This 177-nucleotide RNA was probed chemically with 2A3.
RNA sequence: GGGAACGACUCGAGUAGAGUCGAAAAGCUAGAAGGUUCGCCUUCUAGCAAAGAAAGCGGUAAACACCGAAAUAAAACGGUGAGGGCCGCAACCACCCAUAAAAAGGAUCAACUUCGGUUGAUCCAACUCCCUCUCUAUCUUCGGAUAGAGAGGGAGAAAAGAAACAACAACAACAAC
Reactivity to 2A3 in 0.01 (KOAc 150mM, MgCl2 10mM, bicine 150mM(pH8.5), 24C), signal-to-noise 1, nucleotides 027 to 126: g040c000u000a010g000a000a010g010g000u110u140c200g070c030c010u000u000c000u000a000g000c010a000a000a000g000a010a060a000g000c010g000g000u070a080a240a000c000a000c040c000g070a030a240a030u260a020a060a010a010c000g010g000u000g020a080g020g110g000c000c000g050c000a000a000c000c040a000c000c000c000a030u230a050a130a000a030a020g010g000a010u010c000a000a000c010u070u170c300g050g000u010u000g040a000u000c000c010a000a020
The RNA was probed in 150 mM KOAc, 10 mM MgCl2 and 150 mM bicine (pH 8.5) at 24 C. Source: RMDB library M2PK50, as collected in RNAgym. The 2A3 profile rests on 967 reads. Reactivities are given for positions 27 through 126.